RNA sequence: GGGAACGACUCGAGUAGAGUCGAAAAGCAACUAAUUUUUCUUCAUUUACUGUUUACUGCCAGAAAUCAGCUAAAUCGAUUUCAUAAUUUUAGGAACCAUAGAAAAAAUUGAGAAUUUUUUUUUGUGACGAAUGGAUUGUUUCGACAAUCCAUUCGUAAAAGAAACAACAACAACAAC
Reactivity to 2A3 in 0.01 (KOAc 150mM, MgCl2 10mM, bicine 150mM(pH8.5), 24C), signal-to-noise 1, nucleotides 027 to 126: g000c000a000a010c010u020a000a040u030u090u000u000u000c000u100u020c060a080u090u090u060a140c020u040g090u030u080u200a110c060u120g050c040c020a050g000a000a010a000u030c000a010g050c040u170a070a070a130u050c030g050a040u000u000u000c000a000u080a130a240u150u090u080u140a060g000g000a020a020c020c110a050u090a130g200a060a070a000a120a040a100u130u220g070a030g070a120a080u130u000u020u000u000u000u030u030u000g050u010g090